[RMDB]
RNA sequence: GGGAACGACUCGAGUAGAGUCGAAAACUGCUUAACUUCGGUUAAGCAGAAAGUGAUCUAAGCCGAAAGACACCGGCAAGUGACCGGCAGCACAAGCCGAAAAAACGGAUGACUUCGGUCAUCCGAAGAUGUUAAGCUGGUUCGCCAGCUUAACAUCAAAAGAAACAACAACAACAAC
Reactivity to DMS in 0.01 (KOAc 150mM, MgCl2 10mM, bicine 150mM(pH8.5), 24C), signal-to-noise 2, nucleotides 027 to 126: c000u000g000c000u000u000a010a000c000u000u000c180g030g020u000u000a000a000g000c020a010g010a040a030a080g020u000g010a110u010c030u000a070a180g020c020c030g000a100a130a130g020a060c050a050c080c000g010g000c010a060a180g000u000g010a080c070c030g010g000c050a070g000c060a040c050a070a300g020c040c010g010a010a030a050a050a090a080c000g000g000a000u000g010a020c000u000u000c170g020g000u010c010a000u010c000c000g000a040a050
Reactivity to 2A3 in 0.01 (KOAc 150mM, MgCl2 10mM, bicine 150mM(pH8.5), 24C), signal-to-noise 2, nucleotides 027 to 126: c000u010g000c010u030u000a000a000c000u020u020c160g060g000u010u000a000a010g000c000a000g000a000a010a000g030u020g030a120u020c020u060a060a040g070c020c020g090a110a090a000g100a010c030a030c060c000g030g020c050a060a020g020u020g040a080c060c000g060g000c020a010g010c030a060c010a090a010g000c020c020g090a060a070a000a010a000a010c000g000g000a000u010g010a010c020u020u040c200g100g010u000c000a000u040c000c000g000a010a010
This 177-nucleotide RNA was probed chemically with DMS and 2A3. Reactivities are given for positions 27 through 126.